Chemical mapping of a 177-nucleotide RNA with DMS and 2A3. For 2A3 the reverse transcriptase was SuperScript II with manganese. For DMS the reverse transcriptase was MarathonRT. Conditions: 150 mM KOAc, 10 mM MgCl2 and 150 mM bicine (pH 8.5), 24 C.

[RMDB]
RNA sequence: GGGAACGACUCGAGUAGAGUCGAAAAGGAAGAGAUGAGCGGACUCAUCAUGCCGGAACCGGACGCUGGCGUUUUGCAGCGGCGCGAGCAAAUUGUCGCGGAUUUGCGCGUCAUCGUGCCGGGCGAAGAGUAGCAGUCAUUUCGAUGACUGCUACUCAAAAGAAACAACAACAACAAC
Reactivity to DMS in 0.01 (KOAc 150mM, MgCl2 10mM, bicine 150mM(pH8.5), 24C), signal-to-noise 3, nucleotides 027 to 126: g010g030a150a070g020a060g010a050u000g010a040g040c220g000g020a090c020u000c060a040u010c030a090u000g000c040c040g000g000a150a100c010c010g000g010a060c030g010c070u000g030g010c000g030u000u000u010u020g020c040a050g030c110g000g010c010g030c030g000a020g000c170a090a090a110u010u010g010u000c030g020c020g000g010a110u010u000u000g010c030g000c040g010u000c020a060u000c030g010u000g010c000c000g010g000g010c100g000a080a100
Reactivity to 2A3 in 0.01 (KOAc 150mM, MgCl2 10mM, bicine 150mM(pH8.5), 24C), signal-to-noise 2, nucleotides 027 to 126: g060g010a040a040g050a030g010a060u050g020a000g020c180g110g180a170c020u000c000a010u000c010a000u100g020c030c000g020g010a040a070c030c010g000g020a010c010g000c010u000g030g000c000g010u060u040u120u300g000c040a030g010c030g080g030c010g000c020g000a070g080c070a110a120a150u220u180g040u030c010g000c010g050g030a100u030u050u100g010c020g000c000g020u010c010a010u000c010g040u030g190c010c000g000g010g020c030g020a070a080